This 207-nucleotide RNA was probed chemically with 2A3.
RNA sequence: GGGAACGACUCGAGUAGAGUCGAAAAUUUUGUCAGGUUUGUCGAAGAUCUGAUGGUUGUAGGUGUGCAGGAACACAGACCUUCUUUAUGGAUCUAACAUCUUUUAACAUCCCAUGGCACACUUUUGGGAAAUGCUGCCUGAGGACCCUGACCCAGACGACCAUAUGCCAUUCGUGGCAUAUGGUCGAAAAGAAACAACAACAACAAC
Reactivity to 2A3 in 0.01 (KOAc 150mM, MgCl2 10mM, bicine 150mM(pH8.5), 24C), signal-to-noise 1, nucleotides 027 to 156: u140u070u020u140g050u050c050a050g000g000u050u300u210g060u100c060g010a020a000g000a050u020c050u300g010a060u040g090g050u000u050g050u110a110g060g020u000g000u000g000c050a010g060g050a090a000c010a000c000a100g060a060c050c000u000u020c010u040u280u060a150u200g060g050a140u000c000u000a030a030c130a200u050c060u040u300u000u000a010a060c010a050u030c000c060c000a000u050g050g000c040a000c000a000c000u060u040u080u250g000g030g020a000a000a000u060g000c000u000g000c080c030u010g040a050g000g050a080c040c000c000u040g000a040c000c000c040a060g000a000

It was measured as part of the RMDB library OK3TST. The reactions ran in a buffer of 150 mM KOAc, 10 mM MgCl2 and 150 mM bicine (pH 8.5), at 24 C. For 2A3, 337 sequencing reads were counted.